[RMDB]
RNA sequence: GGGAACGACUCGAGUAGAGUCGAAAAGUUAGUACUAUAUACAUAUCCUCCGAAAGGCUGACUUUUGGUUACUGCGAAAUUAAACACUUGUUGGGUUACGGAUUCACUCAUCCAUUUUCACCUCAUGAAUACACUCAGACUUCGGUCUGAGUGUAUUAAAAGAAACAACAACAACAAC
Reactivity to DMS in 0.01 (KOAc 150mM, MgCl2 10mM, bicine 150mM(pH8.5), 24C), signal-to-noise 2, nucleotides 027 to 126: g020u000u010a010g010u000a110c060u000a160u000a250u000a060c090a150u000a090u010c010c020u000c030c060g010a050a130a100g000g000c150u000g000a070c010u020u000u000u000g010g010u000u010a060c060u020g030c050g010a050a140a070u000u000a090a060a100c060a090c080u000u000g000u000u000g000g000g040u010u000a040c210g010g000a070u000u000c090a060c100u000c090a160u020c020c030a090u000u000u000u000c040a110c060c070u020c080a080u000g000